Structure probing data (2A3 and DMS) for a 177-nucleotide construct. The reactions ran in a buffer of 150 mM KOAc, 10 mM MgCl2 and 150 mM bicine (pH 8.5), at 24 C. As a SHAPE reagent, 2A3 marks flexible, mostly unpaired nucleotides at the ribose 2'-OH. The DMS profile rests on 1,005 reads. Source: RMDB library TTRDEL, as collected in RNAgym. In probing experiments dimethyl sulfate is read out at A N1 and C N3, which are open when not base-paired.

RNA sequence: GGGAACGACUCGAGUAGAGUCGAAAAGGUGGUUCGCCACCAAAAAAGAUAUGGACGAGCCGGACCCUCCAUUCGGAAACGAAUGUGAGGAAGGCUGUCCUAAGUCAAAAAGCAGGUUCGCCUGCAAGUUUCACAUACACUUCGGUGUAUGUGAAACAAAAGAAACAACAACAACAAC
Reactivity to 2A3 in 0.01 (KOAc 150mM, MgCl2 10mM, bicine 150mM(pH8.5), 24C), signal-to-noise 2, nucleotides 027 to 126: g000g000u010g010g010u050u100c220g150c050c060a030c000c000a180a010a000a030a080a000g030a000u060a010u070g000g030a010c130g140a030g000c000c000g120g110a220c010c010c000u100c020c000a000u010u010c000g080g030a040a030a020c010g010a010a010u060g090u290g060a010g000g000a010a010g000g000c010u000g000u000c000c000u020a110a000g030u000c070a140a070a070a090a000g040c010a010g000g040u120u220c240g090c080c000u000g000c000a000a000
Reactivity to DMS in 0.01 (KOAc 150mM, MgCl2 10mM, bicine 150mM(pH8.5), 24C), signal-to-noise 1, nucleotides 027 to 126: g000g000u000g000g000u010u040c190g060c010c000a020c000c000a000a000a090a090a150a060g000a010u000a300u020g020g000a050c040g010a010g010c000c000g000g000a170c300c010c000u000c000c010a000u030u000c020g000g000a050a170a120c000g000a040a000u000g000u000g000a030g020g030a040a060g000g010c000u000g010u000c000c000u000a020a050g100u000c040a050a090a050a170a120g010c000a010g000g010u000u020c300g030c070c000u010g010c000a020a020